[RMDB]
RNA sequence: GGGAACGACUCGAGUAGAGUCGAAAAAAAAAAGAUAUGGACAAGCUGCGACGAUCUACGACUACCCACCUAAGUCGGAAACGACUUAGAGGUCGUAGGGAGCAGCAAUUGUCCUAAGUCAAAAAAACUUCAAUAUAGGGUUCGCCCUAUAUUGAAGAAAAGAAACAACAACAACAAC
Reactivity to 2A3 in 0.01 (KOAc 150mM, MgCl2 10mM, bicine 150mM(pH8.5), 24C), signal-to-noise 1, nucleotides 027 to 126: a000a000a000a000a000a000g220a070u300a010u250g020g010a010c010a050a150g200c180u020g000c020g250a300c000g000a280u000c000u010a010c010g010a000c010u160a130c030c000c080a000c010c020u020a000a000g010u010c020g010g020a020a070a050c000g000a000c000u000u000a000g010a020g030g000u000c000g000u000a040g000g000g010a040g040c020a000g030c010a000a020u020u000g000u000c010c000u000a210a030g110u080c140a020a000a000a020a230a140a160
Reactivity to DMS in 0.01 (KOAc 150mM, MgCl2 10mM, bicine 150mM(pH8.5), 24C), signal-to-noise 1, nucleotides 027 to 126: a000a030a110a090a050a120g000a020u000a120u000g000g000a030c000a060a100g000c000u000g000c000g010a090c200g010a060u000c000u010a020c010g020a020c020u010a080c070c030c050a300c150c000u000a000a000g000u000c000g020g000a060a030a020c020g010a020c000u010u020a000g000a060g030g000u000c020g030u000a030g000g000g000a000g030c000a010g020c010a040a000u000u000g030u000c000c000u000a010a080g010u030c030a010a000a080a130a110a080a190
Structure probing data (2A3 and DMS) for a 177-nucleotide construct. The reactions ran in a buffer of 150 mM KOAc, 10 mM MgCl2 and 150 mM bicine (pH 8.5), at 24 C. The data come from the RNA Mapping Database (RMDB), library TTRDES. For 2A3 the reverse transcriptase was SuperScript II with manganese.